[RMDB]
RNA sequence: GGGAACGACUCGAGUAGAGUCGAAAAAUUACCAUAUAUGUGGUGCCUUAAAGCAAGGCCUAUUUAUGAGCUCAGUCCUGGAGGUGAGGAGUCUCACACCACAUAGCUGGCUUCUUUGUCCAGGGUAAGUCCUAGGAGUGUUCGCACUCCUAGGACUAAAAGAAACAACAACAACAAC
Reactivity to 2A3 in 0.01 (KOAc 150mM, MgCl2 10mM, bicine 150mM(pH8.5), 24C), signal-to-noise 1, nucleotides 027 to 126: a000u060u050a020c000c000a050u000a000u010a010u190g070u010g000g000u070g020c010c010u080u060a250a150a060g090c020a000a000g050g020c000c000u050a100u050u240u050a160u120g030a030g050c010u010c120a040g030u070c000c000u050g070g020a090g000g130u070g030a010g000g050a090g080u060c010u020c040a040c010a000c000c030a020c000a000u050a000g020c050u020g020g040c000u080u020c040u100u190u050g050u000c020c030a000g000g040g020u030a000
Reactivity to DMS in 0.01 (KOAc 150mM, MgCl2 10mM, bicine 150mM(pH8.5), 24C), signal-to-noise 1, nucleotides 027 to 126: a040u000u000a100c020c010a120u000a110u000a040u000g020u000g000g000u000g020c010c000u000u000a040a090a140g010c270a020a030g000g020c090c080u010a040u000u020u000a110u010g000a040g020c070u000c060a130g010u000c020c040u000g000g010a040g000g000u000g000a060g000g000a110g050u000c030u000c010a150c030a080c020c000a020c040a010u000a020g020c090u000g000g000c040u000u000c120u000u000u000g000u000c010c050a020g000g000g010u000a040